[RMDB]
RNA sequence: GGGAACGACUCGAGUAGAGUCGAAAAGAUCAAGAUACCGUCGUCGGGGACCUUUAUACAGACUGAAUGACAUCCUGAUGAGAAUUGCCAGCAGAAGCAGUCCAGCCAGCAGCCACAAACCAUAACCCAUAAGUCCGUAGUUCGCUACGGACUUAUGAAAAGAAACAACAACAACAAC
Reactivity to DMS in 0.01 (KOAc 150mM, MgCl2 10mM, bicine 150mM(pH8.5), 24C), signal-to-noise 3, nucleotides 027 to 126: g000a110u000c070a060a060g010a090u000a100c070c100g000u000c080g020u010c050g000g000g020g010a100c090c040u020u000u000a070u020a120c120a120g020a090c030u010g010a050a070u010g000a070c090a070u010c010c020u000g010a090u000g000a120g020a050a090u000u000g000c040c020a020g010c030a070g010a070a080g010c040a030g000u010c050c050a040g010c040c030a010g020c060a040g000c020c040a040c120a030a060a070c070c050a040u000a050a150c110c070
Reactivity to 2A3 in 0.01 (KOAc 150mM, MgCl2 10mM, bicine 150mM(pH8.5), 24C), signal-to-noise 1, nucleotides 027 to 126: g080a000u080c010a000a020g020a140u080a130c060c030g070u050c000g020u000c070g010g000g000g100a080c010c010u110u120u060a070u060a020c010a000g130a030c020u110g030a070a050u120g000a010c010a050u030c020c000u020g040a030u110g050a030g050a160a090u140u050g030c000c030a000g000c000a040g050a080a000g060c030a020g010u020c080c020a020g000c000c000a000g000c000a010g000c000c010a050c070a040a030a020c000c020a010u060a010a060c020c000